[RMDB]
Source: RMDB library OK1LIB, as collected in RNAgym. Structure probing data (DMS and 2A3) for a 177-nucleotide construct. 2A3 adducts were read by reverse transcription with SuperScript II with manganese. For DMS, 4,185 sequencing reads were counted.
RNA sequence: GGGAACGACUCGAGUAGAGUCGAAAAUAAGCAGGAAGCCUGUAGUACAUGUCAGAAGAUCUGGAAGGCAAGUGGGGACUUGACUUUGGAGUGUAACCAGCAAGUACACACCCUGAAGAAAACGAUGAGCUAGUACUCCAUUCGUGGAGUACUAGCUAAAAGAAACAACAACAACAAC
Reactivity to DMS in 0.01 (KOAc 150mM, MgCl2 10mM, bicine 150mM(pH8.5), 24C), signal-to-noise 3, nucleotides 027 to 126: u010a120a100g000c020a040g010g020a160a130g010c020c050u000g030u020a020g000u010a160c090a120u000g000u020c080a070g000a110a110g000a050u020c010u010g000g010a020a000g010g000c050a100a160g000u000g010g000g040g000a050c020u010u010g000a030c060u020u000u000g000g010a150g040u030g020u060a060a080c100c070a050g000c060a010a020g020u000a040c040a040c040a060c010c020c010u010g000a080a060g010a080a050a110a140c120g000a110u040g000
Reactivity to 2A3 in 0.01 (KOAc 150mM, MgCl2 10mM, bicine 150mM(pH8.5), 24C), signal-to-noise 3, nucleotides 027 to 126: u070a000a010g050c040a020g060g000a050a000g020c000c000u050g060u080a050g040u040a050c020a070u090g140u090c030a010g040a140a010g060a300u060c030u150g000g020a060a000g030g000c030a040a000g040u030g000g020g020g000a000c000u000u110g010a070c030u020u110u140g110g000a160g050u170g060u150a150a050c000c000a000g070c020a010a030g010u040a020c030a000c000a010c000c000c000u020g030a060a030g070a010a160a000a010c060g010a050u170g000